[RMDB]
RNA sequence: GGGAACGACUCGAGUAGAGUCGAAAAGCUAUGACAAUAAACCGCCGUCGCAAUAAACCAUUCGGACCCGGGGGCAGUACCCGGCGCCUCCACCAAAGUCCGCGAAAUCCGCGGGCUUCGGCGGGGGUGUACAUCGCUUUUUCGAAAGCGAUGUACAAAAAGAAACAACAACAACAAC
Reactivity to 2A3 in 0.01 (KOAc 150mM, MgCl2 10mM, bicine 150mM(pH8.5), 24C), signal-to-noise 2, nucleotides 027 to 126: g000c030u080a070u180g040a060c020a160a110u160a240a160a020c010c030g010c020c020g040u030c030g000c040a020a060u070a150a050a060c020c000a050u060u070c000g040g030a040c050c010c000g010g020g000g010g000c000a020g010u080a060c040c000c000g000g000c030g000c000c000u030c000c000a030c010c010a010a000a000g010u000c010c000g000c000g070a100a080a030u100c070c000g000c000g000g010g000c000u000u000c000g000g010c000g000g000g000g000g020
Reactivity to DMS in 0.01 (KOAc 150mM, MgCl2 10mM, bicine 150mM(pH8.5), 24C), signal-to-noise 1, nucleotides 027 to 126: g000c030u010a050u000g000a150c080a060a120u010a050a120a160c020c030g000c000c000g020u020c050g030c090a060a060u010a040a130a080c050c010a170u000u000c030g040g000a070c060c000c020g020g030g020g010g030c010a090g000u000a080c020c040c000g030g010c300g000c000c000u000c000c000a000c000c000a010a020a000g000u000c010c000g000c010g010a090a250a120u040c300c000g010c000g000g000g000c000u000u000c000g050g030c040g030g000g000g020g010